RNA sequence: GGGAACGACUCGAGUAGAGUCGAAAACUGAUGUCUGCUCCCACCGACCCGCACGGCGCAGUGCCGGCAAAUGGGAAGUUCCUCGCACUCACGCGCGGGCAGCUCGACAUAUAGCUCUCCCAAGAGCUCGAGUCAUUUAGUUCGCUAAAUGACUCGAAAAAGAAACAACAACAACAAC
Reactivity to 2A3 in 0.01 (KOAc 150mM, MgCl2 10mM, bicine 150mM(pH8.5), 24C), signal-to-noise 8, nucleotides 027 to 126: c030u070g030a030u040g060u030c010u040g020c010u050c040c040c010a050c000c060g140a190c010c010c010g020c010a080c030g060g010c080g050c150a030g020u030g060c040c050g040g040c050a060a130a130u210g050g030g050a070a040g040u090u090c010c000u020c060g000c000a030c020u060c000a050c030g010c010g010c010g010g010g000c000a010g000c010u060c040g040a030c020a020u140a000u060a090g000c000u000c000u030c000c010c020a020a020g020a020g020c010
Reactivity to DMS in 0.01 (KOAc 150mM, MgCl2 10mM, bicine 150mM(pH8.5), 24C), signal-to-noise 3, nucleotides 027 to 126: c090u020g010a040u010g000u010c000u000g020c060u020c030c000c010a130c080c040g010a200c050c010c030g000c040a040c040g000g000c130g010c160a040g000u010g010c010c120g000g000c090a030a090a100u040g020g020g010a150a150g000u040u000c040c000u010c060g010c070a100c050u000c080a090c080g000c030g000c000g010g000g010c110a060g010c080u000c110g000a080c040a040u010a070u020a080g000c000u000c030u000c040c080c030a210a070g000a070g010c020